[RMDB]
RNA sequence: GGGAACGACUCGAGUAGAGUCGAAAAGCUGCGUGAAACCUCGCUGUUUUCUUGGCUAACUUUCAGCGAGGUGAGGCAAGGCGGCAAAAAAAAGUUGUGAGCAGCAACGGCAAGCAAAAAAAAAGUUACAAGUUGCGAUGGUUCGCCAUCGCAACAACGGAAAUAAACAGUUCGCUGUUUAUUUCCGAAAAGAAACAACAACAACAAC
Reactivity to 2A3 in 0.01 (KOAc 150mM, MgCl2 10mM, bicine 150mM(pH8.5), 24C), signal-to-noise 3, nucleotides 027 to 156: g000c000u010g010c020g050u110g040a130a040a020c000c000u000c000g000c000u000g020u000u010u010u010c120u170u250g120g000c100u020a010a010c000u020u020u010c000a000g000c010g000a000g000g010u010g000a010g000g060c080a040a040g090g000c020g000g000c020a020a030a020a030a050a010a110a020g040u050u020g020u010g030a070g040c120a010g000c000a050a010c030g050g010c020a020a070g020c040a050a050a010a010a000a000a000a010a010g010u010u010a020c030a080a080g000u000u000g000c000g000a000u000g000g050u030u050c110g030c060c000a000u000c000g010c000a000a000c000a000a010
Reactivity to DMS in 0.01 (KOAc 150mM, MgCl2 10mM, bicine 150mM(pH8.5), 24C), signal-to-noise 1, nucleotides 027 to 156: g020c020u000g000c010g000u000g000a150a190a020c010c000u000c010g000c000u000g000u010u010u010u010c040u010u000g040g000c060u000a030a040c020u010u000u000c030a070g000c010g000a020g000g020u000g000a070g010g050c050a070a130g020g010c000g030g050c000a000a000a010a040a050a070a050a120g010u000u000g000u000g010a210g030c090a170g010c030a060a050c060g010g000c070a100a110g000c020a010a000a010a000a010a050a000a020a100g000u010u020a050c030a070a130g000u000u000g010c010g000a030u000g010g040u010u020c300g080c000c000a010u000c000g010c000a000a000c000a040a090
The record gives the reactivity of an RNA of 207 nucleotides to 2A3 and DMS. For DMS the reverse transcriptase was MarathonRT. Source: RMDB library M2RFPK, as collected in RNAgym.